Source: RMDB library OK1LIB, as collected in RNAgym. The record gives the reactivity of an RNA of 177 nucleotides to DMS and 2A3. For 2A3 the reverse transcriptase was SuperScript II with manganese. Values cover nucleotides 27 to 126.
RNA sequence: GGGAACGACUCGAGUAGAGUCGAAAAGGUGAACUGGACGGGAAGUAGAUCCAGCGACUGCUUCCGAAGCUUUGAUAAGAGCAACUCCAUCUACGUUGCUCAAGUAGGUGGUAGCAGCAAACACCGACGUACCGUCACUCUUCGGAGUGACGGUACGAAAAGAAACAACAACAACAAC
Reactivity to DMS in 0.01 (KOAc 150mM, MgCl2 10mM, bicine 150mM(pH8.5), 24C), signal-to-noise 2, nucleotides 027 to 126: g010g040u000g040a100a150c000u000g000g000a060c040g000g000g040a050a100g020u020a150g000a200u020c000c040a030g020c230g030a300c000u000g000c000u000u000c000c000g100a300a040g000c000u000u000u020g010a210u000a100a060g000a060g000c000a040a060c000u020c240c120a080u000c170u030a030c040g000u000u010g000c000u000c000a030a060g000u020a000g000g040u000g010g020u000a020g000c050a060g020c070a030a080a190c000a040c010c000g000a110
Reactivity to 2A3 in 0.01 (KOAc 150mM, MgCl2 10mM, bicine 150mM(pH8.5), 24C), signal-to-noise 2, nucleotides 027 to 126: g020g000u010g020a120a000c010u070g030g050a020c000g020g100g000a090a000g070u160a020g010a170u010c030c040a000g000c020g020a110c000u030g000c000u000u000c000c000g010a020a030g000c000u060u100u120g060a070u130a300a050g000a010g010c010a040a090c000u020c000c020a070u010c020u120a050c040g180u110u080g090c030u020c050a050a020g000u040a030g020g050u080g080g000u070a000g000c030a000g010c020a030a030a030c030a000c000c000g000a000